[RMDB]
RNA sequence: GGGAACGACUCGAGUAGAGUCGAAAAUGGCGAUUCUGCAAGGUGGCCAUAUUCAGCAGAUCGCAGGCGCCCGCGAGCUUUACAAUAGACCGGCAAACCUGUUCUCCGCCAGGUUUAUUGGCGAGAAUCAUGCUCAUGGAUUCGUCCAUGAGCAUGAAAAAGAAACAACAACAACAAC
Reactivity to 2A3 in 0.01 (KOAc 150mM, MgCl2 10mM, bicine 150mM(pH8.5), 24C), signal-to-noise 2, nucleotides 027 to 126: u060g060g000c020g020a020u200u030c060u020g010c050a040a080g070g010u090g110g000c060c030a060u090a090u160u150c050a020g010c020a010g010a030u000c000g000c010a000g140g010c070g100c070c020c050g090c030g050a040g020c050u140u140u160a020c020a030a040u030a030g020a020c010c010g000g000c000a050a040a070c010c050u050g030u120u060c040u000c030c020g010c020c010a050g000g000u020u050u050a020u050u010g000g000c000g010a020g020a010a030
Reactivity to DMS in 0.01 (KOAc 150mM, MgCl2 10mM, bicine 150mM(pH8.5), 24C), signal-to-noise 2, nucleotides 027 to 126: u040g010g000c010g010a050u000u000c010u000g010c060a130a150g010g000u000g020g000c090c090a060u010a120u000u010c080a210g020c000a020g010a040u000c010g000c020a060g000g030c200g000c040c010c040g020c130g000a100g030c020u000u010u010a040c040a050a100u000a070g000a030c030c020g000g000c020a140a080a100c080c040u000g000u010u000c010u010c020c080g010c010c010a090g030g000u010u000u010a030u010u000g000g020c060g010a050g000a130a160
Chemical mapping of a 177-nucleotide RNA with 2A3 and DMS. 2A3 adducts were read by reverse transcription with SuperScript II with manganese. For DMS, 1,505 sequencing reads were counted. Reactivities are given for positions 27 through 126.